Conditions: 150 mM KOAc, 10 mM MgCl2 and 150 mM bicine (pH 8.5), 24 C. The record gives the reactivity of an RNA of 177 nucleotides to DMS and 2A3. Source: RMDB library RFMREP, as collected in RNAgym. Values cover nucleotides 27 to 126. The DMS profile rests on 1,792 reads. The 2A3 profile rests on 1,060 reads.
[RMDB]
RNA sequence: GGGAACGACUCGAGUAGAGUCGAAAAUUCCUUGCAGUCAACGAUGCCAACGUAGUGGUGAUUUUGGUCAUUGCUAGAGCGAAAGCUAGUGUAUGGGCUCCGGGGAUAGUACGGACGCAAGUUUGAAGAUGUUGGUUUAGUUCGCUAAACCAACAUCAAAAGAAACAACAACAACAAC
Reactivity to DMS in 0.01 (KOAc 150mM, MgCl2 10mM, bicine 150mM(pH8.5), 24C), signal-to-noise 2, nucleotides 027 to 126: u010u000c030c000u000u020g010c040a120g010u000c070a080a100c050g000a110u000g010c000c030a070a190c070g020u010a040g020u020g010g010u000g010a080u000u000u010u000g000g040u000c020a030u000u020g000c000u000a040g000a080g020c030g000a060a080a170g010c010u000a080g010u000g000u010a090u010g020g000g000c010u010c020c020g010g000g000g000a100u000a100g010u010a040c070g000g020a050c110g010c080a020a060g000u010u010u000g010a140a130
Reactivity to 2A3 in 0.01 (KOAc 150mM, MgCl2 10mM, bicine 150mM(pH8.5), 24C), signal-to-noise 1, nucleotides 027 to 126: u030u010c000c000u000u080g050c040a040g020u060c010a020a040c040g040a040u120g000c040c010a090a040c070g060u040a030g060u030g090g030u020g080a050u030u000u150u230g120g020u040c030a000u030u050g000c010u030a080g000a040g130c040g040a130a000a010g010c010u020a020g000u000g020u170a120u120g110g000g000c010u020c000c020g050g020g040g030a010u010a050g040u050a040c030g070g000a000c060g000c050a020a020g050u080u140u150g010a030a030